[RMDB]
RNA sequence: GGGAACGACUCGAGUAGAGUCGAAAACUAAAGAAAGCAAUGAACCUCAAUGAGAAUCUUGCAACCGUCUUACCUGAAUUCUUGUCAAACAAUAUGUUGAGGUCAACUCAAAGUUAGGUGUGGAGACCCGAUGUAGUAUCUUCGGAUACUACAUCGGAAAAGAAACAACAACAACAAC
Reactivity to DMS in 0.01 (KOAc 150mM, MgCl2 10mM, bicine 150mM(pH8.5), 24C), signal-to-noise 3, nucleotides 027 to 126: c030u010a020a090a100g000a170a100a130g010c050a020a060u010g000a070a030c120c040u000c020a110a100u010g000a040g020a050a090u010c050u010u000g020c070a050a090c060c130g020u000c050u010u000a070c020c010u000g010a080a060u000u020c070u000u010g000u000c120a070a050a160c110a060a070u010a090u020g000u000u010g000a030g000g000u010c160a080a150c060u010c060a030a070a050g000u010u000a050g010g030u000g010u000g000g010a100g010a070c120
Reactivity to 2A3 in 0.01 (KOAc 150mM, MgCl2 10mM, bicine 150mM(pH8.5), 24C), signal-to-noise 3, nucleotides 027 to 126: c000u010a000a030a060g140a030a090a010g040c000a040a100u100g030a050a040c000c000u000c020a090a110u190g020a070g030a110a030u040c020u010u040g050c030a060a050c010c040g070u040c010u040u040a050c000c010u030g060a130a070u080u050c040u020u090g100u110c050a080a110a090c030a090a110u120a080u290g020u020u020g010a020g030g000u070c040a080a120c010u020c050a140a000a000g050u090u050a060g010g020u040g070u080g120g040a060g010a020c030